[RMDB]
RNA sequence: GGGAACGACUCGAGUAGAGUCGAAAAAGGGGUGCAGGUGGCUGACGUCUGAUACAUACGCUAACUUCGCUAGAGCUAAAGAACCUUGUGGGUUGCAAAUAGACUCAGAUAAGAGGUUUUCUUUUGUUAUCUAUAGGCACACAGAUGAGAGCGGUCAAGUCUCAUUAUGAUUCGUCAUAAUGAGACUAAAAGAAACAACAACAACAAC
Reactivity to DMS in 0.01 (KOAc 150mM, MgCl2 10mM, bicine 150mM(pH8.5), 24C), signal-to-noise 3, nucleotides 027 to 156: a100g000g010g030g010u000g030c030a080g040g030u010g010g040c020u000g000a080c050g010u000c060u000g030a150u010a110c080a180u000a050c060g020c030u000a070a040c050u000u010c080g080c040u010a100g000a090g020c020u020a050a090a150g020a050a050c020c010u000u000g040u000g020g030g010u000u000g000c030a100a080a220u010a240g020a050c010u000c020a090g010a140u000a070a110g010a040g000g010u000u010u000u000c010u020u010u000u010g020u000u010a080u000c040u000a060u010a060g010g020c060a100c070a120c110a110g010a040u000g010a110g000a100g010c030g000g030u000c020a050
Reactivity to 2A3 in 0.01 (KOAc 150mM, MgCl2 10mM, bicine 150mM(pH8.5), 24C), signal-to-noise 2, nucleotides 027 to 156: a000g050g010g000g010u060g000c030a020g000g070u040g020g050c020u030g010a020c010g020u000c030u030g040a050u060a110c060a050u120a040c050g020c030u030a090a050c040u100u090c020g000c070u040a010g020a020g060c000u040a050a010a030g020a020a000c000c030u040u050g060u090g060g020g030u010u010g020c030a050a130a070u140a090g040a050c010u000c020a000g040a180u160a080a040g020a050g020g000u020u090u080u020c020u000u040u020u040g020u050u020a030u060c000u020a090u080a150g040g000c050a010c000a010c010a090g050a030u040g020a030g000a020g070c050g020g000u040c030a050
An RNA of 207 nucleotides, treated with DMS and 2A3 and read out base by base. The DMS profile rests on 4,618 reads. For DMS the reverse transcriptase was MarathonRT.